[RMDB]
RNA sequence: GGGAACGACUCGAGUAGAGUCGAAAACUGAAACGACGAGCUCCCGGUGCCUGCGCCGAUACGCCCUCGGCCUCCACCGUGUUGAUCUGCCCACAAGGCGGCUUGACGAGAUUGCGACUGGAACGAAGUAUGAAGCGUACUUCGGUACGCUUCAUACAAAAGAAACAACAACAACAAC
Reactivity to 2A3 in 0.01 (KOAc 150mM, MgCl2 10mM, bicine 150mM(pH8.5), 24C), signal-to-noise 3, nucleotides 027 to 126: c040u070g050a050a040a050c070g100a010c040g010a010g020c010u000c020c020c010g010g020u030g030c020c030u040g030c060g000c010c000g030a020u040a130c030g060c000c010c030u030c020g010g000c000c020u010c000c020a050c020c030g000u020g020u040u020g030a060u010c010u050g010c000c000c000a100c020a020a060g030g010c000g000g000c020u020u070g030a020c010g030a030g050a130u060u120g010c040g040a040c040u030g030g010a090a020c050g020a080a030
Reactivity to DMS in 0.01 (KOAc 150mM, MgCl2 10mM, bicine 150mM(pH8.5), 24C), signal-to-noise 3, nucleotides 027 to 126: c030u000g000a130a080a040c140g000a050c020g010a100g010c030u010c020c030c000g000g010u010g010c060c010u000g000c060g010c050c030g000a070u020a080c050g030c040c040c050u010c030g000g010c050c020u010c010c040a050c030c000g010u000g010u010u020g000a070u020c010u020g000c000c000c000a140c210a100a270g010g000c040g020g000c050u000u000g000a060c040g000a050g000a110u010u000g020c050g000a060c050u030g000g020a060a080c070g000a120a070

Chemical mapping of a 177-nucleotide RNA with 2A3 and DMS.
The reactions ran in a buffer of 150 mM KOAc, 10 mM MgCl2 and 150 mM bicine (pH 8.5), at 24 C.
Values cover nucleotides 27 to 126.
2A3 adducts were read by reverse transcription with SuperScript II with manganese.